[RMDB]
RNA sequence: GGGAACGACUCGAGUAGAGUCGAAAAAGAUCCACGCUACGGCGUGGAUCACACGUUCAUCCCUAUUGGGACGGAAGUAGGGAUAGUGCCGAAGGAACGCAUUAGUCAUGCGCUACGGCGCAUGACACACAUCAGAGUCACUUCGGUGACUCUGAAAUCACUACGCAUUCUUCGGAAUGCGUAGUGAAAAAGAAACAACAACAACAAC
Reactivity to 2A3 in 0.01 (KOAc 150mM, MgCl2 10mM, bicine 150mM(pH8.5), 24C), signal-to-noise 2, nucleotides 027 to 156: a000g000a000u000c000c000a000c000g030c000u020a060c300g080g000c000g000u000g000g000a000u010c000a000c000a000c000g100u090u070c030a030u030c030c000c010u030a070u040u070g000g040g080a020c040g100g050a040a010g010u010a010g000g000g010a020u050a030g080u080g050c050c020g060a070a060g050g100a070a000c040g020c110a110u110u140a040g000u030c000a000u000g010c000g000c020u010a010c200g110g000c000g010c000a000u000g010a010c000a000c000a000c000a080u030c000a000g000a000g000u000c000a000c020u060u050c140g060g000u000g000a000c000u000c010u000g010a010a000a000
Structure probing data (2A3) for a 207-nucleotide construct.